[RMDB]
About this RNA:
Chemical mapping of a 177-nucleotide RNA with 2A3 and DMS.

RNA sequence: GGGAACGACUCGAGUAGAGUCGAAAAUCGUCAGUCACGCGAACAACUUCUUUCAACACCAUUCCACCCCAUGCAUUCCUUAUCUGAUCGUCCAUCCACUGAGACUGACUACCGAUCGCAUUACUAACCUCCUUGCGUUAUUCGUAACGCAAGGAGGAAAAGAAACAACAACAACAAC
Reactivity to 2A3 in 0.01 (KOAc 150mM, MgCl2 10mM, bicine 150mM(pH8.5), 24C), signal-to-noise 1, nucleotides 027 to 126: u130c000g010u030c000a000g000u000c000a010c090g090c060g100a100a080c020a050a080c010u050u000c050u010u170u080c030a040a000c020a000c000c040a060u070u010c020c000a100c010c000c000c010a040u060g000c000a050u030u030c000c020u090u130a070u050c020u050g050a080u000c040g070u000c020c010a000u020c000c000a010c050u020g000a010g000a130c040u000g000a000c000u030a080c010c020g020a030u070c010g030c080a120u050u050a090c060u070a060a100
Reactivity to DMS in 0.01 (KOAc 150mM, MgCl2 10mM, bicine 150mM(pH8.5), 24C), signal-to-noise 1, nucleotides 027 to 126: u010c110g000u000c030a010g000u010c000a050c100g020c020g010a020a020c130a100a090c130u010u000c030u000u000u010c040a050a040c080a050c050c020a130u000u000c060c060a130c130c020c000c030a110u050g010c100a120u000u010c000c010u000u020a040u000c010u000g020a050u000c120g000u000c060c030a050u000c040c050a040c080u000g010a130g010a030c110u010g030a110c040u020a120c070c000g000a090u000c030g000c060a070u010u020a120c120u000a160a170